[RMDB]
RNA sequence: GGGAACGACUCGAGUAGAGUCGAAAAGAUAUGGAGACACUAAGAGCGAUAAGAAUUGUGUCGGAAACGACAUGAUUCUUUUGACGCUUAUGUGUCUCCUAAGUCAAAACAUCCGUUCGCGGAUGAAGAUCUAGAACAACUUCGGUUGUUCUAGAUCAAAAGAAACAACAACAACAAC
Reactivity to 2A3 in 0.01 (KOAc 150mM, MgCl2 10mM, bicine 150mM(pH8.5), 24C), signal-to-noise 4, nucleotides 027 to 126: g010a000u060a020u110g000g020a000g000a000c000a000c030u110a300a230g040a020g100c050g080a120u060a300a000g000a000a020u020u010g000u010g010u010c000g000g010a050a060a010c010g000a000c010a010u020g000a010u020u000c030u010u020u020u050g060a030c040g010c000u010u000a030u100g000u010g000u010c010u000c000c000u000a000a010g000u000c010a000a010a020a160c000a000u000c030c020g040u090u080c300g010c000g120g000a000u010g020a070a040
Reactivity to DMS in 0.01 (KOAc 150mM, MgCl2 10mM, bicine 150mM(pH8.5), 24C), signal-to-noise 4, nucleotides 027 to 126: g030a050u000a300u010g010g000a040g000a020c000a000c000u000a100a180g000a020g010c000g030a120u000a010a000g010a010a010u000u000g020u000g000u000c000g010g000a090a110a170c000g010a000c000a010u000g010a020u000u000c000u000u000u000u000g010a210c130g000c010u000u000a220u010g010u000g010u000c000u000c000c000u000a010a050g010u000c050a090a100a150a210c020a000u000c000c000g020u000u010c290g020c010g040g000a010u010g010a070a100